[RMDB]
Chemical mapping of a 177-nucleotide RNA with DMS. Source: RMDB library OK2TST, as collected in RNAgym.
RNA sequence: GGGAACGACUCGAGUAGAGUCGAAAAUGCUCGAGCGGCGGCGCGCCGAGCUGGCCGCUGAUAUCUCCUUGGAAGCCCGAGGAAUUGCCGUCAUAGGAGCUUCAGGUAGCGGAAAGACUAGUGCAGAUGCACGGGUAUGAUUCGUCAUACCCGUGCAAAAAGAAACAACAACAACAAC
Reactivity to DMS in 0.01 (KOAc 150mM, MgCl2 10mM, bicine 150mM(pH8.5), 24C), signal-to-noise 2, nucleotides 027 to 126: u020g030c010u000c010g050a070g050c000g000g010c020g010g010c010g030c150g000c060c020g000a150g000c100u000g010g020c000c000g000c030u010g000a100u010a100u010c060u000c000c010u010u000g020g020a150a120g030c180c050c030g010a070g020g010a090a080u010u000g030c040c020g010u000c180a110u000a130g000g000a050g020c020u000u000c100a060g000g000u000a060g000c030g000g000a060a050a080g010a060c080u000a080g030u000g020c050a100g000a190
The reactions ran in a buffer of 150 mM KOAc, 10 mM MgCl2 and 150 mM bicine (pH 8.5), at 24 C.